Source: RMDB library M2RFPK, as collected in RNAgym. The record gives the reactivity of an RNA of 207 nucleotides to 2A3. The reactions ran in a buffer of 150 mM KOAc, 10 mM MgCl2 and 150 mM bicine (pH 8.5), at 24 C. 2A3 adducts were read by reverse transcription with SuperScript II with manganese. Values cover nucleotides 27 to 156.
[RMDB]
RNA sequence: GGGAACGACUCGAGUAGAGUCGAAAAAACUCAGCUAGGGAGAGUAUAACAUUCAUGUUGACGAGACCUAGACGAAACACAGAGGAAAACUAUUAAUCACUGGAUAGUAUUAGUAAUGACUCUGUGUAAAACUCUUCUACGUUCGCGUAGAAGAGAAGAACGCUAUAGCCUUCGGGCUAUAGCGUUCAAAAGAAACAACAACAACAAC
Reactivity to 2A3 in 0.01 (KOAc 150mM, MgCl2 10mM, bicine 150mM(pH8.5), 24C), signal-to-noise 1, nucleotides 027 to 156: a000a000c030u010c000a000g030c010u000a000g010g030g000a040g010a090g040u140a250u160a300a060c100a120u190u250c090a120u300g030u060u010g040a100c030g000a030g090a120c000c010u000a000g020a000c000g010a000a000a000c000a000c000a000g000a000g010g000a030a080a050a000c000u000a010u040u040a000a010u050c030a030c220u060g140g000a030u180a300g010u030a000u080u050a030g000u000a090a200u080g030a050c000u060c000u000g010u000g000u000a000a030a000a000c000u030c000u000u020c000u000a000c000g010u090u040c220g040c000g060u000a000g000a000a000g000a000g000a010a000